[RMDB]
RNA sequence: GGGAACGACUCGAGUAGAGUCGAAAAGCUCGGAGACGAGCAAGGCUGACAAAACCCUGUCCCUACCUCCACGUGGUGUCGGCUGGAUAAUGCUGCAUUAUGUUGCAUUUAUCAACAGGGAAGGAAAGCUCAUGGGCUGAUUCGUCAGCCCAUGAGCAAAAGAAACAACAACAACAAC
Reactivity to 2A3 in 0.01 (KOAc 150mM, MgCl2 10mM, bicine 150mM(pH8.5), 24C), signal-to-noise 1, nucleotides 027 to 126: g000c000u000c000g000g010a080g010a050c010g000a010g000c000a000a100g000g010c000u000g000a000c030a000a110a100a100c040c010c000u000g110u010c000c000c000u000a000c000c000u050c060c050a110c120g070u030g000g000u000g000u000c000g000g070c000u050g010g020a000u020a000a000u020g000c070u010g030c000a050u050u160a140u300g030u050u030g000c010a020u160u190u000a100u010c000a000a060c000a000g100g040g000a010a000g070g010a110a040a000
The record gives the reactivity of an RNA of 177 nucleotides to 2A3. The RNA was probed in 150 mM KOAc, 10 mM MgCl2 and 150 mM bicine (pH 8.5) at 24 C. Source: RMDB library OK1LIB, as collected in RNAgym.